[RMDB]
RNA sequence: GGGAACGACUCGAGUAGAGUCGAAAAGUUCGAUGUUUGCCAACUUCCUCUUAUGGCCUAUACAUGGCAAACAUCGAUUGGCGUGAGACUGAGGAAGUGGUAGAUAUGUGAGGUCUCAUGCCUCACACUACUCCGAUGUAUUCGUACAUUGGAGUAGAAAAGAAACAACAACAACAAC
Reactivity to 2A3 in 0.01 (KOAc 150mM, MgCl2 10mM, bicine 150mM(pH8.5), 24C), signal-to-noise 9, nucleotides 027 to 126: g080u050u030c010g000a010u010g000u000u000u000g010c010c010a060a040c050u050u030c020c010u050c050u130u150a150u280g110g060c020c020u180a140u040a180c110a140u110g010g000c000a010a010a000c000a000u000c000g000a030u030u110g000g000c020g000u050g030a030g010a030c040u040g010a020g050g040a060a030g020u050g050g100u180a150g050a220u140a070u240g150u060g080a060g010g030u010c020u010c060a020u090g000c000c000u020c000a030c000a000
Reactivity to DMS in 0.01 (KOAc 150mM, MgCl2 10mM, bicine 150mM(pH8.5), 24C), signal-to-noise 9, nucleotides 027 to 126: g010u010u000c010g010a020u000g000u000u000u000g000c000c000a080a110c100u000u000c010c010u000c110u010u010a110u010g010g010c220c090u010a090u010a100c190a140u010g000g000c010a010a010a010c000a000u000c010g010a030u010u000g010g010c020g030u000g000a050g010a050c040u000g010a120g010g000a040a050g020u000g010g000u000a090g010a120u010a080u010g010u000g010a170g010g000u000c050u000c080a040u000g010c000c000u000c110a040c140a140
Source information: The record gives the reactivity of an RNA of 177 nucleotides to 2A3 and DMS. The reactions ran in a buffer of 150 mM KOAc, 10 mM MgCl2 and 150 mM bicine (pH 8.5), at 24 C. For 2A3, 136,247 sequencing reads were counted. It was measured as part of the RMDB library OK2TRN. 2A3 adducts were read by reverse transcription with SuperScript II with manganese.